[RMDB]
RNA sequence: GGGAACGACUCGAGUAGAGUCGAAAAGAGGUUCAGUGCCGGAGACCUCGGGGUGACGGCUCACAGCGCCCAGCCCAGUGUGUGUCUGGGGCUGGGGGUCCAUAGGGCUAGGCAGCUCUGGGGGGCAACCCUAGAGCUUAUUCGUAAGCUCUAGGGUAAAAGAAACAACAACAACAAC
Reactivity to DMS in 0.01 (KOAc 150mM, MgCl2 10mM, bicine 150mM(pH8.5), 24C), signal-to-noise 9, nucleotides 027 to 126: g010a070g010g010u000u000c090a100g010u000g010c040c030g010g010a170g000a130c020c010u000c020g010g000g010g010u000g000a160c130g010g000c010u000c030a090c240a100g000c030g000c010c000c000a020g010c010c010c010a100g010u000g020u010g020u000g010u000c000u000g010g020g010g010c000u000g000g000g000g000g010u010c030c070a130u010a180g010g000g010c010u000a080g010g010c090a250g000c020u000c020u000g000g000g010g000g010g010c210a070
Reactivity to 2A3 in 0.01 (KOAc 150mM, MgCl2 10mM, bicine 150mM(pH8.5), 24C), signal-to-noise 6, nucleotides 027 to 126: g050a010g050g000u100u110c080a040g060u060g120c020c020g080g050a110g060a110c000c020u010c010g020g000g000g010u040g010a030c020g010g010c000u010c020a070c030a020g020c030g260c010c000c000a010g000c010c000c020a080g020u110g030u070g030u040g080u120c020u040g070g020g040g000c000u000g000g000g000g030g000u030c030c000a080u170a100g000g000g020c010u030a120g080g050c060a020g010c010u000c010u030g020g000g000g020g020g000c010a020
An RNA of 177 nucleotides, treated with DMS and 2A3 and read out base by base. The RNA was probed in 150 mM KOAc, 10 mM MgCl2 and 150 mM bicine (pH 8.5) at 24 C. 2A3 adducts were read by reverse transcription with SuperScript II with manganese. Values are in units of 0.01, from 0 to 300, in steps of 10.